[RMDB]
RNA sequence: GGGAACGACUCGAGUAGAGUCGAAAAGAUAUGGAACGCUUGGAGGGAGCCAGAGACUCGGAAACGAGUCUGUGGCUUUGAUCUCCACUGGCGUUCCUAAGUCAAAACCGUGACUUCGGUCACGGAAUCGUAGUCUACUCUUCGGAGUAGACUACGAAAAAGAAACAACAACAACAAC
Reactivity to DMS in 0.01 (KOAc 150mM, MgCl2 10mM, bicine 150mM(pH8.5), 24C), signal-to-noise 1, nucleotides 027 to 126: g000a080u000a300u000g020g000a020a000c000g030c000u000u000g000g000a020g080g000g020a010g010c000c030a010g000a030g010a010c000u000c000g000g020a110a170a300c010g000a020g010u000c000u000g000u030g030g000c000u000u000u000g060a090u000c000u000c000c000a070c300u000g070g000c020g010u020u000c000c010u000a000a070g020u000c040a060a090a110a210c020c000g000u010g010a000c000u000u010c190g020g010u010c020a010c000g000g010a020a020